[RMDB]
RNA sequence: GGGAACGACUCGAGUAGAGUCGAAAAACAGUCAGUACGCUUACUGAGGGAAACGGGAGCCGGGCUUGGGACAAGAGCCAUCCCAAGUCCAAGGCCAAGUAGGCUCUAGUGAUGGUACGCCAUCACAAAAACUGGUCUACCUUCGGGUAGACCAGAAUCAACCAUGACUGUUCGCAGUCAUGGUUGAAAAAGAAACAACAACAACAAC
Reactivity to 2A3 in 0.01 (KOAc 150mM, MgCl2 10mM, bicine 150mM(pH8.5), 24C), signal-to-noise 1, nucleotides 027 to 156: a000c030a000g080u060c040a010g000u030a060c140g010c190u090u020a000c010u060g020a060g000g020g070a080a130a210c080g060g030g060a010g040c020c020g000g000g010c010u000u000g000g000g030a010c010a040a030g000a020g020c010c000a020u010c000c000c000a000a000g030u040c030c000a010a000g030g000c000c030a000a100g160u150a060g110g000c000u000c030u060a010g000u000g000a000u000g010g020u020a010c280g000c030c000a010u000c000a000c020a000a120a000a000a000c000u000g000g000u010c000u000a000c000c000u060u030c260g070g000g000u000a000g000a000c000c000a010g000a000a000